[RMDB]
Annotation:
Source: RMDB library 15KLIB, as collected in RNAgym. An RNA of 170 nucleotides, treated with 2A3 and DMS and read out base by base. Values cover nucleotides 27 to 129. DMS adducts were read by reverse transcription with MarathonRT.
RNA sequence: GGGAACGACUCGAGUAGAGUCGAAAACUCUCACUCUGUGGCUACCUUGACGGCGCCCACAAUUGUGAAUCAAGAGAGGUAUGUUAAAAUUACUGGGUUGUACCCAACCAUUACGGUACCUGAAGAGAAGGACUCGGCUUCGGCCGAGUCAAAAGAAACAACAACAACAAC
Reactivity to 2A3 in 0.01 (KOAc 150mM, MgCl2 10mM, bicine 150mM(pH8.5), 24C), signal-to-noise 3, nucleotides 027 to 129: c000u000c020u000c020a000c020u060c000u020g040u050g010g010c000u080a100c010c000u010u130g160a080c060g060g000c030g060c000c030c010a000c010a020a170u090u020g010u040g120a020a090u080c140a190a020g090a020g000a010g050g000u040a000u020g160u080u140a010a110a070a130u130u100a150c070u000g020g060g000u020u070g060u090a130c000c000c030a010a020c070c020a110u200u140a010c030g030g000u000a020c040c000u050g090a050a040g100a070g010a060a070g140
Reactivity to DMS in 0.01 (KOAc 150mM, MgCl2 10mM, bicine 150mM(pH8.5), 24C), signal-to-noise 4, nucleotides 027 to 129: c010u080c000u040c040a080c030u020c050u050g020u020g000g040c040u000a110c000c010u000u000g000a160c300g030g000c300g010c000c040c000a100c010a050a070u080u120g030u000g120a070a120u030c160a040a180g000a020g030a060g020g000u030a090u060g010u020u020a000a050a030a040u070u000a080c120u050g030g040g000u050u020g140u000a210c050c030c000a050a060c100c160a150u000u040a090c180g000g120u030a020c060c070u040g020a000a000g020a110g050a090a040g130
Background: For DMS, 4,647 sequencing reads were counted.